[RMDB]
RNA sequence: GGGAACGACUCGAGUAGAGUCGAAAAGGAAGACAAAAUUGCAACGGAAAUGGGUAGCGAUCGAAUUUUCGAAGAAUUUCUCCAAGAUUACGCAUUUUUGAGAAAUGCUGUUGAAGAAUACUUGGAACGUAAUCGGUAGUUUCGACUACCGAUUACGAAAAGAAACAACAACAACAAC
Reactivity to DMS in 0.01 (KOAc 150mM, MgCl2 10mM, bicine 150mM(pH8.5), 24C), signal-to-noise 3, nucleotides 027 to 126: g010g010a070a040g010a070c060a050a060a120a080u010u000g020c050a070a140c130g030g000a040a070a060u000g000g010g020u000a080g010c030g010a060u000c050g010a100a100u010u000u010u000c010g020a060a110g000a090a090u000u010u010c080u000c010c030a010a030g010a100u000u010a050c160g010c030a020u000u000u000u000u030g020a120g020a030a000a000u000g010c010u000g010u010u010g010a060a070g000a030a060u000a100c010u000u010g000g000a060a170
Reactivity to 2A3 in 0.01 (KOAc 150mM, MgCl2 10mM, bicine 150mM(pH8.5), 24C), signal-to-noise 2, nucleotides 027 to 126: g020g010a040a000g060a050c010a070a050a060a000u140u120g020c000a020a070c040g050g060a050a100a120u110g090g000g040u040a020g080c020g030a030u050c030g000a000a060u240u070u040u080c030g020a040a000g000a050a110u100u070u000c060u000c000c000a030a000g000a030u060u080a020c070g010c040a010u010u010u020u040u160g140a120g130a020a000a000u000g000c040u110g070u170u140g060a050a050g090a100a020u060a210c000u010u020g010g020a060a040
The record gives the reactivity of an RNA of 177 nucleotides to DMS and 2A3. 2A3 adducts were read by reverse transcription with SuperScript II with manganese. The DMS profile rests on 2,838 reads.